[RMDB]
RNA sequence: GGGAACGACUCGAGUAGAGUCGAAAAGACUGCGUGCACUCGAGACGAUAUCGAGCCGGAAAUUAAUCGAUAAUGUCUCUAGUAGUGGAUACGAUCCGGCAAGUAUCGACUACCUGUGCUCGUAGGAGCAUUACCGAUCAUUCGUGAUCGGUAAUGCAAAAGAAACAACAACAACAAC
Reactivity to DMS in 0.01 (KOAc 150mM, MgCl2 10mM, bicine 150mM(pH8.5), 24C), signal-to-noise 2, nucleotides 027 to 126: g010a090c000u000g000c000g000u010g010c020a030c000u000c200g010a010g030a020c020g000a090u000a000u000c010g010a120g000c020c000g000g010a170a090a150u030u050a060a090u020c000g010a050u010a020a100u010g000u000c000u000c000u000a070g010u010a050g040u000g000g010a000u010a040c000g000a130u000c000c020g000g000c010a130a170g000u000a000u000c000g000a060c000u000a000c000c300u020g000u000g000c020u000c010g020u000a010g000g000a180
Reactivity to 2A3 in 0.01 (KOAc 150mM, MgCl2 10mM, bicine 150mM(pH8.5), 24C), signal-to-noise 9, nucleotides 027 to 126: g090a020c000u000g000c000g000u010g000c000a000c000u020c040g000a000g000a000c010g010a010u000a000u050c000g000a010g000c010c010g010g080a100a130a090u280u210a110a150u180c000g000a000u020a070a060u140g020u000c000u000c010u020a050g030u010a010g010u050g140g000a000u000a010c000g010a030u010c000c000g000g000c040a040a010g010u000a000u010c020g060a010c000u050a090c010c040u040g000u000g000c000u000c000g000u000a000g000g000a010